[RMDB]
RNA sequence: GGGAACGACUCGAGUAGAGUCGAAAAGAUAUGGACCGAUGGAGAGACCCCAGCCGAUGAGUCGGAAACGACGAGGCUGAACUCUCUAUGAAGUCGGUCCUAAGUCAAAGAGUGGUUCGCCACUCAACAAUAACCCAUUGUUCGCAAUGGGUUAUUGAAAAGAAACAACAACAACAAC
Reactivity to 2A3 in 0.01 (KOAc 150mM, MgCl2 10mM, bicine 150mM(pH8.5), 24C), signal-to-noise 5, nucleotides 027 to 126: g020a030u080a050u160g000g000a000c000c000g000a020u130g040g010a010g010a020g090a160c080c010c020c040a000g030c010c010g180a300u230g110a050g030u010c000g010g000a090a060a020c000g010a000c010g020a040g000g000c000u000g000a010a010c010u000c000u000c010u010a220u150g170a050a030g030u010c000g000g000u000c010c000u020a120a020g050u010c050a130a090a020g010a010g010u010g040g040u070u140c260g060c050c010a000c000u010c000a000a020
Reactivity to DMS in 0.01 (KOAc 150mM, MgCl2 10mM, bicine 150mM(pH8.5), 24C), signal-to-noise 7, nucleotides 027 to 126: g010a060u000a300u000g010g000a020c000c000g010a020u000g010g000a020g000a020g020a060c080c240c110c010a010g010c000c000g010a130u010g010a270g000u000c000g010g010a090a070a140c000g010a010c000g010a140g010g020c000u000g000a070a060c070u000c000u000c000u000a120u020g000a080a140g010u000c000g010g000u000c000c000u000a010a080g010u000c060a100a090a130g000a010g020u000g010g000u000u010c260g010c020c000a010c000u010c000a060a140